Background: An RNA of 207 nucleotides, treated with DMS and 2A3 and read out base by base. Conditions: 150 mM KOAc, 10 mM MgCl2 and 150 mM bicine (pH 8.5), 24 C. 2A3 adducts were read by reverse transcription with SuperScript II with manganese. For DMS the reverse transcriptase was MarathonRT.
[RMDB]
RNA sequence: GGGAACGACUCGAGUAGAGUCGAAAAAGAGCCGGAUACGUCCGGCUCAACGGGGGAUACGUGUGGUGCGGUCCGCUCCCCCUAUGGCAUAACAAAUGCACCACACACUAGGCUACGGCCUAGUGAAAAAAUCCCUACAUGUUCGCAUGUAGGGAAACAAUACCAUCCUGUUCGCAGGAUGGUAUUGAAAAGAAACAACAACAACAAC
Reactivity to DMS in 0.01 (KOAc 150mM, MgCl2 10mM, bicine 150mM(pH8.5), 24C), signal-to-noise 1, nucleotides 027 to 156: a080g000a040g040c030c000g040g030a040u010a110c220g000u000c040c000g000g050c010u000c000a000a010c050g000g010g000g050g020a090u000a040c040g030u010g010u000g010g030u010g010c000g050g000u020c090c040g000c050u010c000c000c010c000c020u000a010u010g030g030c100a190u010a090a110c080a070a080a080u010g000c010a020c000c010a000c030a130c000a020c020u000a000g000g020c010u000a130c300g100g010c010c000u000a010g020u000g000a000a010a090a100a060a080u000c000c000c000u000a010c000a010u010g000u000u000c300g070c010a000u010g000u010a010g020g000g010a000a020a010
Reactivity to 2A3 in 0.01 (KOAc 150mM, MgCl2 10mM, bicine 150mM(pH8.5), 24C), signal-to-noise 3, nucleotides 027 to 156: a000g010a000g000c010c000g000g030a020u040a030c150g090u000c000c000g000g010c000u000c000a000a000c000g000g010g000g010g000a030u060a150c060g050u020g000u010g020g000u010g010c020g010g030u050c050c030g020c060u060c020c010c000c010c010u030a110u140g080g000c040a060u080a210a030c040a070a090a020u110g000c000a000c000c000a000c000a000c000a000c000u000a000g020g000c000u000a010c250g070g000c000c000u000a000g000u010g000a050a000a000a000a000a020u010c000c000c000u000a000c000a000u010g020u030u060c160g000c160a000u000g000u010a000g000g000g020a000a000a010